[RMDB]
RNA sequence: GGGAACGACUCGAGUAGAGUCGAAAAAGCUGCCUUUGUGGGCUGCGCUCUUAUUGUCACAGUGGCAUUGGUGUGAUGGUUCAAGCUACCAAUGGCUUUCCGGUAGCCGAGAUGCACUGAAAGUGAAUGACUGUGACAGGUUCGCCUGUCACAGUCAAAAAGAAACAACAACAACAAC
Reactivity to 2A3 in 0.01 (KOAc 150mM, MgCl2 10mM, bicine 150mM(pH8.5), 24C), signal-to-noise 2, nucleotides 027 to 126: a000g030c100u100g000c020c050u090u300u290g300u300g070g010g000c020u020g000c010g010c000u020c040u070u230a300u040u300g020u060c010a020c010a050g070u110g230g000c020a020u010u010g040g000u300g060u050g180a020u100g030g010u090u140c060a040a050g010c000u030a020c040c050a090a260u090g030g020c040u010u140u260c010c040g050g010u030a010g100c000c010g050a070g000a030u020g000c030a000c040u000g080a130a000a000g090u160g080a100a220
Reactivity to DMS in 0.01 (KOAc 150mM, MgCl2 10mM, bicine 150mM(pH8.5), 24C), signal-to-noise 2, nucleotides 027 to 126: a090g020c000u010g010c000c000u000u030u010g030u020g020g010g000c030u030g000c040g020c100u000c020u000u030a090u010u010g000u000c080a110c060a010g040u000g010g000c020a060u000u000g000g000u000g010u000g000a220u010g000g000u000u010c070a070a050g030c030u000a130c150c200a070a060u000g000g000c090u000u010u000c040c020g000g000u000a280g010c010c040g010a040g010a060u020g030c000a050c020u000g000a040a020a110g000u000g000a120a130
This 177-nucleotide RNA was probed chemically with 2A3 and DMS. The data come from the RNA Mapping Database (RMDB), library OK2TST.